[RMDB]
RNA sequence: GGGAACGACUCGAGUAGAGUCGAAAAUAUCGGAUGCGCCAUUUUGGCCGUUCAGCGGCAACUGCUGUUCGACGGCGAUGAAAAAGAUCUGAUCGCGCAGCGGCUUCCAGCGCAGACCGGUGCCGGAUCGAUGUAGGGUUUUCGAACCCUACAUCGAAAAAGAAACAACAACAACAAC
Reactivity to DMS in 0.01 (KOAc 150mM, MgCl2 10mM, bicine 150mM(pH8.5), 24C), signal-to-noise 2, nucleotides 027 to 126: u010a020u010c010g000g020a300u000g010c020g050c020c050a150u000u000u000u000g010g000c000c010g020u000u020c200a170g000c020g030g000c020a120a110c040u000g010c000u000g000u000u000c040g020a080c020g000g020c070g000a110u000g000a060a050a110a120a020g000a090u000c010u000g010a130u000c000g000c040g040c030a040g010c010g000g000c070u000u000c180c110a150g000c020g010c000a030g020a100c000c020g000g010u000g010c000c000g000g000a200
Reactivity to 2A3 in 0.01 (KOAc 150mM, MgCl2 10mM, bicine 150mM(pH8.5), 24C), signal-to-noise 2, nucleotides 027 to 126: u210a000u010c010g000g010a010u010g000c020g030c020c050a130u180u150u110u170g170g010c020c000g000u090u080c050a060g100c000g060g000c010a070a040c040u060g000c010u020g030u020u010c010g000a000c010g010g090c050g050a030u110g080a080a130a030a030a010g060a060u010c020u030g060a280u080c000g000c020g000c010a010g000c000g000g000c010u130u030c080c080a030g000c000g000c010a000g130a210c000c000g000g000u010g040c010c000g080g050a040